[RMDB]
RNA sequence: GGGAACGACUCGAGUAGAGUCGAAAAAGUCAGGUUACGACCUGACAGCGUGCCGGCUCCGUUCGCCGGAGAAGCUUACUGCGGACCAACGCCGUGUGCUUCCUCGUCGAACGGUGGCGACCACGAAUCUUUAAAGUGACUUCGGUCACUUUAAAGAAAAAGAAACAACAACAACAAC
Reactivity to DMS in 0.01 (KOAc 150mM, MgCl2 10mM, bicine 150mM(pH8.5), 24C), signal-to-noise 6, nucleotides 027 to 126: a090g010u000c000a000g010g010u000u010a110c200g010a050c000c000u000g000a000c010a050g010c010g010u000g010c250c010g000g000c000u000c000c000g020u000u000c000g000c070c000g000g010a050g000a010a000g010c000u000u020a020c010u010g010c000g000g030a200c290c300a140a170c040g000c000c060g000u000g010u000g000c000u000u000c000c010u000c000g000u000c000g000a020a000c000g000g000u000g000g010c000g000a040c300c000a010c000g010a140a160
Reactivity to 2A3 in 0.01 (KOAc 150mM, MgCl2 10mM, bicine 150mM(pH8.5), 24C), signal-to-noise 7, nucleotides 027 to 126: a000g010u010c010a010g000g020u050u080a100c240g050a040c050c000u000g000a000c000a000g040c010g000u010g010c030c010g070g070c010u000c000c000g000u000u000c000g000c000c000g000g000a010g000a000a000g000c010u050u100a010c000u010g010c000g030g060a180c070c100a230a100c060g000c010c010g000u020g020u030g000c000u000u000c000c010u010c000g000u000c000g000a000a000c000g000g000u000g000g010c000g000a020c020c000a010c010g040a070a070